[RMDB]
RNA sequence: GGGAACGACUCGAGUAGAGUCGAAAAGAUAUGGAUGAUUGGUGAGGUGAUGACCUCGGAAACGAGCAAGCCUACCACUGUCAUCCUAAGUCAGAGUCCUGGUCUCCGUUCGCGGAGACCAGGACAAGGAUGAUCCGUUGUUCGCAACGGAUCAUCCAAAAGAAACAACAACAACAAC
Reactivity to DMS in 0.01 (KOAc 150mM, MgCl2 10mM, bicine 150mM(pH8.5), 24C), signal-to-noise 2, nucleotides 027 to 126: g010a060u000a300u000g010g000a010u000g000a000u000u020g010g000u000g000a040g000g020u000g000a140u020g020a080c300c000u000c000g000g000a110a090a160c010g010a000g000c030a060a240g000c000c010u010a070c130c000a020c300u000g020u000c020a010u000c000c000u000a010a050g000u000c040a080g000a130g030u000c000c000u000g010g000u000c000u000c000c000g010u020u000c240g000c040g030g000a020g000a000c000c000a010g000g000a000c010a000a040
Reactivity to 2A3 in 0.01 (KOAc 150mM, MgCl2 10mM, bicine 150mM(pH8.5), 24C), signal-to-noise 2, nucleotides 027 to 126: g040a030u070a030u160g000g000a020u010g010a020u090u300g040g050u050g130a070g040g040u050g070a300u190g090a130c030c000u000c010g010g000a030a070a010c010g000a010g000c010a140a010g010c010c010u080a120c130c000a020c060u060g000u010c000a000u000c000c000u010a120a030g060u010c040a020g040a040g190u010c010c000u000g000g000u000c000u010c000c030g000u060u100c300g010c020g120g000a050g020a010c000c000a000g000g000a000c020a000a000

The record gives the reactivity of an RNA of 177 nucleotides to DMS and 2A3. The reactions ran in a buffer of 150 mM KOAc, 10 mM MgCl2 and 150 mM bicine (pH 8.5), at 24 C.